Source: RMDB library OK2TST, as collected in RNAgym. Chemical mapping of a 177-nucleotide RNA with DMS and 2A3. 2A3 adducts were read by reverse transcription with SuperScript II with manganese. As a SHAPE reagent, 2A3 marks flexible, mostly unpaired nucleotides at the ribose 2'-OH. The DMS profile rests on 3,973 reads. For DMS the reverse transcriptase was MarathonRT.

RNA sequence: GGGAACGACUCGAGUAGAGUCGAAAACACGCUUGGCGUGGCGAUUACCGACGAUCCGCUGCCAGUCUUCGCCAAGGCGCACGGUGUCCUUGAUUUCACCAGCCCUGCCGCAAGUGUGGAAUUUGCAGAGUGAUGAGGUAUUCGUACCUCAUCACUCAAAAGAAACAACAACAACAAC
Reactivity to DMS in 0.01 (KOAc 150mM, MgCl2 10mM, bicine 150mM(pH8.5), 24C), signal-to-noise 4, nucleotides 027 to 126: c030a040c010g010c000u000u010g010g000c040g040u000g030g000c010g010a040u000u000a040c030c040g020a060c080g010a110u000c090c130g010c070u000g000c010c020a120g010u000c050u000u000c040g030c010c050a140a080g020g030c100g030c050a080c190g020g010u010g010u000c100c110u010u020g010a160u000u010u000c030a020c020c000a230g010c000c010c010u000g000c140c040g000c030a000a020g020u010g000u010g000g020a100a110u000u010u010g010c200a140
Reactivity to 2A3 in 0.01 (KOAc 150mM, MgCl2 10mM, bicine 150mM(pH8.5), 24C), signal-to-noise 3, nucleotides 027 to 126: c000a010c010g040c010u060u090g140g010c040g070u090g000g000c010g030a030u040u080a040c010c040g020a020c030g040a090u080c050c030g030c110u040g000c030c000a020g000u020c000u020u030c030g000c010c030a030a040g050g000c070g000c030a080c090g000g000u050g010u030c020c010u150u130g130a280u130u080u050c030a030c020c000a010g020c000c000c020u070g010c010c010g020c020a010a020g000u020g020u040g050g010a060a120u140u080u140g040c070a010